[RMDB]
RNA sequence: GGGAACGACUCGAGUAGAGUCGAAAAGUCUGUGCGUUUCCAUUUGAGUAUCCUGAAAACGGGCUUUUCAGCACGGAACGUACAUAUUAAAUAGUAGGAGUGCAUAGUGGCCCGUAUAGCAGGCAUUGAGGCGAGGAUUGUUUCGACAAUCCUCGAAUCUCCACUAAGUCUUCGGACUUAGUGGAGAAAAAGAAACAACAACAACAAC
Reactivity to DMS in 0.01 (KOAc 150mM, MgCl2 10mM, bicine 150mM(pH8.5), 24C), signal-to-noise 1, nucleotides 027 to 156: g030u000c090u030g010u010g000c060g050u010u040u020c030c020a260u010u000u010g000a230g030u000a050u000c030c000u000g000a090a090a190a030c050g010g020g000c010u020u000u000u000c030a290g040c050a090c030g010g030a070a040c050g010u010a250c090a090u000a120u000u000a090a030a270u010a090g000u000a070g030g010a190g000u000g000c050a090u000a210g030u000g000g000c010c030c000g000u000a030u000a150g010c020a010g020g020c080a060u000u010g000a100g040g000c030g000a070g060g000a010u000u010g030u000u010u000c150g020a110c010a000a030u000c000c000u000c000g000a020a010
Reactivity to 2A3 in 0.01 (KOAc 150mM, MgCl2 10mM, bicine 150mM(pH8.5), 24C), signal-to-noise 1, nucleotides 027 to 156: g060u000c060u050g030u040g040c040g040u010u020u000c030c010a060u130u130u080g100a110g080u130a130u110c000c000u030g070a100a060a000a000c000g000g030g000c050u000u180u100u100c020a010g010c040a000c000g010g070a070a020c000g060u000a000c010a040u040a070u100u190a160a170a050u130a030g030u000a010g000g170a090g040u030g000c060a030u090a220g070u040g070g000c000c000c000g000u010a000u010a010g000c020a000g040g000c000a010u020u280g040a040g000g120c000g000a000g000g000a010u000u000g000u010u100u030c050g020a000c000a000a000u000c010c010u000c000g000a000a020